[RMDB]
RNA sequence: GGGAACGACUCGAGUAGAGUCGAAAACUGGAGAAGGGAAGGUGGUCAAGCGUAAGAGGGUGCACAAGAAACCCACUUUUGCUGCAAUCUUGUGUGCUGAUGCCAAGAACCAUUUUGGAGGGACUCCCCACGUGUUAGAAUUCGUUCUAACACGUGGAAAAGAAACAACAACAACAAC
Reactivity to 2A3 in 0.01 (KOAc 150mM, MgCl2 10mM, bicine 150mM(pH8.5), 24C), signal-to-noise 3, nucleotides 027 to 126: c030u020g050g010a080g020a110a090g040g000g010a070a020g010g030u060g010g040u040c050a050a030g030c030g060u060a080a040g070a060g200g000g000u030g000c010a010c010a040a030g010a100a070a030c010c230c000a010c010u170u180u170u230g080c100u020g000c020a030a090u010c020u040u030g020u020g010u020g050c030u060g000a070u160g040c010c010a030a050g050a080a030c020c020a060u060u090u060u130g040g010a060g020g000g030a030c010u000c020c000
Reactivity to DMS in 0.01 (KOAc 150mM, MgCl2 10mM, bicine 150mM(pH8.5), 24C), signal-to-noise 6, nucleotides 027 to 126: c100u010g010g010a070g010a140a090g010g010g010a080a060g010g000u000g020g010u000c080a140a110g010c070g010u000a070a080g010a130g000g000g020u000g000c020a040c050a040a040g000a030a070a150c180c280c010a080c090u010u000u020u020g020c110u000g010c080a040a140u000c010u000u000g020u010g010u000g010c030u000g000a110u010g000c020c020a060a070g000a070a090c100c070a060u010u000u000u010g010g000a070g000g000g000a140c070u000c040c080
Structure probing data (2A3 and DMS) for a 177-nucleotide construct. The reactions ran in a buffer of 150 mM KOAc, 10 mM MgCl2 and 150 mM bicine (pH 8.5), at 24 C. DMS adducts were read by reverse transcription with MarathonRT.